[RMDB]
RNA sequence: GGGAACGACUCGAGUAGAGUCGAAAAAAGCUGCAGAGCUCGCAGAAAGGAUUGAGCGCAGGGAGCAAAUCAUUCAGGAAAUAUGGAUGAACAGUGGUUUGGACACCUCGCUCCCAAGAAACAUGGAGUAAUAUGGGGACUUCGGUCCCCAUAUUACAAAAGAAACAACAACAACAAC
Reactivity to DMS in 0.01 (KOAc 150mM, MgCl2 10mM, bicine 150mM(pH8.5), 24C), signal-to-noise 1, nucleotides 027 to 126: a160a140g000c020u000g030c030a220g020a140g030c110u000c060g010c090a040g000a100a080a100g040g000a140u010u000g020a000g000c040g010c080a090g030g010g020a070g050c060a090a090a110u000c000a000u030u000c060a000g030g000a100a150a040u000a120u030g040g000a030u000g000a000a030c210a040g020u000g000g000u000u000u010g040g000a170c280a110c010c020u000c080g100c060u000c000c000c000a120a090g000a120a050a080c240a070u020g010g000a300